[RMDB]
An RNA of 177 nucleotides, treated with DMS and 2A3 and read out base by base. The reactions ran in a buffer of 150 mM KOAc, 10 mM MgCl2 and 150 mM bicine (pH 8.5), at 24 C. For DMS the reverse transcriptase was MarathonRT. Values are in units of 0.01, from 0 to 300, in steps of 10.

RNA sequence: GGGAACGACUCGAGUAGAGUCGAAAAGCUUAGAAGUAAGCCCGACCAGGUUUUCAUGGAACCGUAAGGAAGGACGCUACAAGAAUCCCCGCUUUUCUAUGCCGUGGAUCCAGCGACUCCCCAAGGAGUCACUUAUAAUAUUCGUAUUAUAAGUGACAAAAGAAACAACAACAACAAC
Reactivity to DMS in 0.01 (KOAc 150mM, MgCl2 10mM, bicine 150mM(pH8.5), 24C), signal-to-noise 9, nucleotides 027 to 126: g010c010u010u010a040g010a160a100g010u000a030a180g010c010c020c030g000a300c040c030a180g000g010u010u000u010u010c110a090u010g010g010a060a060c010c000g000u020a210a260g000g010a070a130g010g010a100c040g020c020u010a050c150a110a110g010a080a040u010c010c000c030c160g010c020u000u010u020u010c170u020a060u010g010c090c020g020u010g010g000a040u010c030c070a050g010c020g000a120c030u000c010c000c010c040a150a180g010g010a190
Reactivity to 2A3 in 0.01 (KOAc 150mM, MgCl2 10mM, bicine 150mM(pH8.5), 24C), signal-to-noise 9, nucleotides 027 to 126: g010c010u050u050a030g030a200a050g120u060a060a020g010c000c000c000g020a030c000c010a030g050g040u030u040u050u140c090a100u170g120g040a060a060c000c010g030u090a030a050g020g030a020a070g030g010a070c040g000c010u050a040c040a100a050g050a090a080u020c010c010c010c000g000c010u110u120u090u040c100u120a100u130g060c080c010g030u050g020g010a020u010c020c020a000g010c010g030a020c020u030c000c000c000c010a020a040g050g010a040